RNA sequence: GGGAACGACUCGAGUAGAGUCGAAAACGCCUUCACCUACCAGAGUAUCACCAGCAGAUAGAGUAGCAUUACCUGCCUGAGUACCAGCGAUGAUACGGUCGUUGCCAGCACCACCAGUGAUGGUGUCUCCAUCAGCCAGGUUCGCCUGGCUGAUGGAAAAAGAAACAACAACAACAAC
Reactivity to DMS in 0.01 (KOAc 150mM, MgCl2 10mM, bicine 150mM(pH8.5), 24C), signal-to-noise 1, nucleotides 027 to 126: c170g010c020c030u010u000c080a050c060c030u000a150c050c060a170g030a110g040u000a040u000c050a050c010c010a170g020c080a050g040a070u010a020g000a080g020u000a060g000c090a040u030u000a090c100c020u020g030c060c010u010g000a060g020u000a110c040c050a080g000c050g040a060u020g000a240u000a020c000g000g020u000c020g000u010u000g030c010c020a190g000c100a020c040c010a000c060c040a060g000u060g000a070u000g020g010u000g020u010c110
Reactivity to 2A3 in 0.01 (KOAc 150mM, MgCl2 10mM, bicine 150mM(pH8.5), 24C), signal-to-noise 1, nucleotides 027 to 126: c020g040c020c010u100u110c050a110c020c010u060a060c020c020a020g000a040g150u050a080u080c100a050c040c020a020g100c000a000g080a130u260a060g120a020g090u090a000g010c040a070u050u140a070c000c000u020g000c000c010u020g030a010g100u090a130c070c000a030g000c030g060a040u010g020a030u030a100c030g030g020u000c000g070u000u050g140c080c000a000g050c000a030c000c020a000c030c030a050g080u070g170a140u020g020g000u020g030u060c020
This 177-nucleotide RNA was probed chemically with DMS and 2A3. Values cover nucleotides 27 to 126. For DMS the reverse transcriptase was MarathonRT.